RNA sequence: GGGAACGACUCGAGUAGAGUCGAAAAAGCUCAAAAGCAGUGCGUGAGAGAUGAGAGAAGCAGAGAGUACGUAGUUUUCCACAAUAAGCUCUAAGAUUUUACGCCUUAGGAUUUUAGCCCUUAUUACACAAUAAUGCUACUUCGGUAGCAUUAUUGUAAAAGAAACAACAACAACAAC
Reactivity to 2A3 in 0.01 (KOAc 150mM, MgCl2 10mM, bicine 150mM(pH8.5), 24C), signal-to-noise 2, nucleotides 027 to 126: a000g030c010u020c030a080a120a040a010g040c040a010g060u020g100c070g000u020g030a040g000a000g010a030u120g020a010g000a000g040a110a020g040c080a030g050a000g000a020g080u050a030c040g060u050a020g030u050u070u050u000c030c010a060c000a060a060u080a050a030g010c030u000c000u050a000a030g000a030u010u050u120u040a050c070g090c010c030u070u070a050g030g000a040u000u050u020u130a020g020c000c000c040u060u030a090u060u130a070c060
Reactivity to DMS in 0.01 (KOAc 150mM, MgCl2 10mM, bicine 150mM(pH8.5), 24C), signal-to-noise 5, nucleotides 027 to 126: a080g010c030u010c050a060a070a100a150g000c080a050g010u000g010c080g010u000g010a070g010a080g000a080u000g000a110g010a060g010a090a060g010c080a050g010a110g000a060g010u000a050c080g010u010a090g000u000u010u000u000c020c020a130c170a040a050u010a030a060g000c070u010c020u000a040a040g000a060u000u010u010u000a060c210g010c110c060u010u000a070g000g000a040u000u020u010u000a050g010c020c040c010u000u000a040u000u000a130c220